[RMDB]
RNA sequence: GGGAACGACUCGAGUAGAGUCGAAAAGACGCCUGUGUGGCGAAGCGAGGAUGAGAAAGAGCCGCACAUUAAACAGUCCAUCUAGCGGCAAGAUGGAUUGCUCGCAAAAAGAUCCAUAUCACCGAGACCCUAUAUCCUCCUUCGGGAGGAUAUAGGGAAAAGAAACAACAACAACAAC
Reactivity to DMS in 0.01 (KOAc 150mM, MgCl2 10mM, bicine 150mM(pH8.5), 24C), signal-to-noise 1, nucleotides 027 to 126: g000a050c100g000c020c000u000g030u010g000u010g000g040c030g020a020a120g000c050g000a080g000g000a070u000g000a100g020a000a080a130g020a100g000c040c010g000c000a090c110a030u000u020a020a040a210c100a070g040u000c000c000a020u000c020u000a100g000c000g000g030c000a040a000g000a000u000g020g000a020u000u030g010c100u000c060g050c130a070a070a050a120a100g000a020u030c090c000a020u020a060u000c070a090c040c010g000a070g000a140
Reactivity to 2A3 in 0.01 (KOAc 150mM, MgCl2 10mM, bicine 150mM(pH8.5), 24C), signal-to-noise 4, nucleotides 027 to 126: g030a010c010g090c040c020u070g030u050g040u090g020g010c010g020a050a010g060c060g020a020g080g020a110u180g040a100g130a090a140a030g090a030g020c010c010g010c010a020c000a020u090u110a040a070a030c050a030g020u010c000c000a010u000c010u010a040g040c020g040g040c060a010a010g000a000u010g010g000a000u010u040g000c020u020c010g000c040a080a060a000a000a000g050a020u030c020c000a050u060a020u140c040a030c060c040g000a020g050a080